[RMDB]
Source information
Conditions: 150 mM KOAc, 10 mM MgCl2 and 150 mM bicine (pH 8.5), 24 C. The record gives the reactivity of an RNA of 177 nucleotides to 2A3 and DMS.
RNA sequence: GGGAACGACUCGAGUAGAGUCGAAAAGAUAUGGAGAGCCGACAGACAUGCGUGGAGGUCGGAAACGACCUUUCACGCAACAGCUGUGGCUCUCCUAAGUCAAAAGUAGCCUGUUCGCAGGCUACAAGGAUCCAUUAAACUUCGGUUUAAUGGAUCCAAAAGAAACAACAACAACAAC
Reactivity to 2A3 in 0.01 (KOAc 150mM, MgCl2 10mM, bicine 150mM(pH8.5), 24C), signal-to-noise 1, nucleotides 027 to 126: g000a010u030a010u040g000g020a000g000a000g000c040c040g040a010c010a000g020a030c120a240u300g000c000g000u000g000g010a000g000g010u010c020g000g020a020a010a010c010g000a000c000c010u010u090u080c020a000c010g000c010a000a000c000a010g000c000u000g000u030g000g000c000u000c000u000c000c010u000a000a000g000u010c010a000a080a080a000g010u000a000g020c000c010u020g050u030u060c300g000c130a010g010g000c010u010a000c000a000a020
Reactivity to DMS in 0.01 (KOAc 150mM, MgCl2 10mM, bicine 150mM(pH8.5), 24C), signal-to-noise 2, nucleotides 027 to 126: g000a030u000a100u020g010g000a030g000a020g030c000c010g010a050c020a020g000a000c140a110u020g020c000g050u000g000g010a020g000g010u000c010g010g000a000a010a060c000g010a030c000c000u000u010u010c000a010c000g020c020a030a010c240a190g000c000u000g000u000g000g010c000u000c000u000c000c000u010a010a050g010u000c010a100a140a130a130g020u000a000g010c010c000u000g020u000u000c250g030c000a000g010g000c000u000a000c000a040a090

As a SHAPE reagent, 2A3 marks flexible, mostly unpaired nucleotides at the ribose 2'-OH. It was measured as part of the RMDB library TTRDES.